[RMDB]
RNA sequence: GGGAACGACUCGAGUAGAGUCGAAAACGGCAUGAUACCACCGUUAUCGGGUCAACAGAGUAGUUGCAAAUGACAACAAUGCUCAGGGUUAUGCUCUCGCUGCCUAAUGGCGGUGCGGGACACCCACAAAAGAUAUUGAUCUUCGGAUCAAUAUCAACAUGGAUUACAUCUUCGGAUGUAAUCCAUGAAAAGAAACAACAACAACAAC
Reactivity to DMS in 0.01 (KOAc 150mM, MgCl2 10mM, bicine 150mM(pH8.5), 24C), signal-to-noise 2, nucleotides 027 to 156: c010g010g040c020a050u010g060a130u000a070c030c020a000c010c000g030u000u010a040u000c140g000g000g050u000c010a120a180c140a150g020a040g050u000a060g020u000u000g010c000a120a130a200u010g020a120c010a020a040c010a050a070u000g020c010u000c000a150g010g000g000u000u000a060u000g010c060u000c010u000c030g040c020u000g010c000c010u000a070a110u000g040g010c020g020g000u000g010c030g010g030g000a080c020a090c000c000c020a090c070a030a040a100a110g010a030u000a030u000u020g010a010u000c000u000u000c300g050g000a020u000c000a010a010u000a010u000c000a030a150
Reactivity to 2A3 in 0.01 (KOAc 150mM, MgCl2 10mM, bicine 150mM(pH8.5), 24C), signal-to-noise 9, nucleotides 027 to 156: c010g000g000c020a020u130g010a010u040a040c000c000a010c000c010g210u100u060a030u080c030g000g000g000u010c010a010a030c080a040g010a000g010u070a020g010u020u020g050c070a100a240a300u270g080a180c000a020a000c010a050a140u130g010c010u020c060a060g050g000g000u090u140a100u270g020c030u010c000u000c010g000c010u040g010c010c010u250a300a170u210g020g000c030g040g130u060g000c020g000g000g020a020c000a020c000c030c000a050c030a020a060a000a010g000a000u000a000u000u000g000a000u000c010u040u090c220g090g010a000u000c000a000a000u000a000u000c000a000a010
Source information: Chemical mapping of a 207-nucleotide RNA with DMS and 2A3. For DMS, 4,970 sequencing reads were counted. The RNA was probed in 150 mM KOAc, 10 mM MgCl2 and 150 mM bicine (pH 8.5) at 24 C. The 2A3 profile rests on 16,585 reads. DMS adducts were read by reverse transcription with MarathonRT. The data come from the RNA Mapping Database (RMDB), library M2RFPK. For 2A3 the reverse transcriptase was SuperScript II with manganese.